[RMDB]
RNA sequence: GGGAACGACUCGAGUAGAGUCGAAAAUAGUAGAGACAGGGUUUCACCAUGUUGGCCAGGCUGGUCUUGAAUUCCUGGCCUCAAGGGAUCCACCAGCCUCGGCAUCACAAAGUGCUAGGAUUACAGGUCUUCCGGUCUAUUUCGAUAGACCGGAAGAAAAAGAAACAACAACAACAAC
Reactivity to DMS in 0.01 (KOAc 150mM, MgCl2 10mM, bicine 150mM(pH8.5), 24C), signal-to-noise 1, nucleotides 027 to 126: u010a020g010u000a110g010a120g010a040c110a130g010g000g000u000u000u000c090a100c020c050a090u010g030u000u000g000g000c000c020a000g000g010c060u010g020g000u000c060u010u050g000a030a050u000u000c010c000u000g010g020c060c050u000c030a020a010g000g000g000a070u000c020c090a080c050c010a060g000c000c020u000c180g020g000c030a050u000c060a030c110a070a090a030g000u010g000c040u000a050g010g000a110u010u010a030c120a060g010g020